[RMDB]
RNA sequence: GGGAACGACUCGAGUAGAGUCGAAAAUCCUAAGUCUCUUCCGAAGGUUUCUUGGAUUUAGUGUGGGAGAGUCGGAAACGACUCGUUGAUCACACUUGUCAGAAACCUAAGGAAGAGAUAUGGAAAAGAAUGUGGUAUCUUCGGAUACCACAUUCAAGACAUUAUCACGCUUCGGCGUGAUAAUGUCAAAAGAAACAACAACAACAAC
Reactivity to 2A3 in 0.01 (KOAc 150mM, MgCl2 10mM, bicine 150mM(pH8.5), 24C), signal-to-noise 1, nucleotides 027 to 156: u000c000c000u050a080a030g000u030c000u020c000u020u010c010c010g030a060a040g050g000u000u040u000c050u120u190g150g020a050u170u250u300a020g000u010g010u000g000g000g000a000g000a000g000u000c000g010g020a060a120a050c000g000a000c000u000c020g030u210u110g000a000u010c000a010c010a010c030u000u020g010u030c000a010g000a000a000a000c020c000u000a000a000g010g000a000a000g000a000g000a000u000a000u010g040g020a010a070a040a090g020a000a000u000g050u010g030g030u000a000u020c040u020u100c300g050g010a000u000a000c000c000a000c000a010u000u010c000a000a000
The record gives the reactivity of an RNA of 207 nucleotides to 2A3. The reactions ran in a buffer of 150 mM KOAc, 10 mM MgCl2 and 150 mM bicine (pH 8.5), at 24 C. Reactivities are given for positions 27 through 156. For 2A3 the reverse transcriptase was SuperScript II with manganese. The 2A3 profile rests on 801 reads.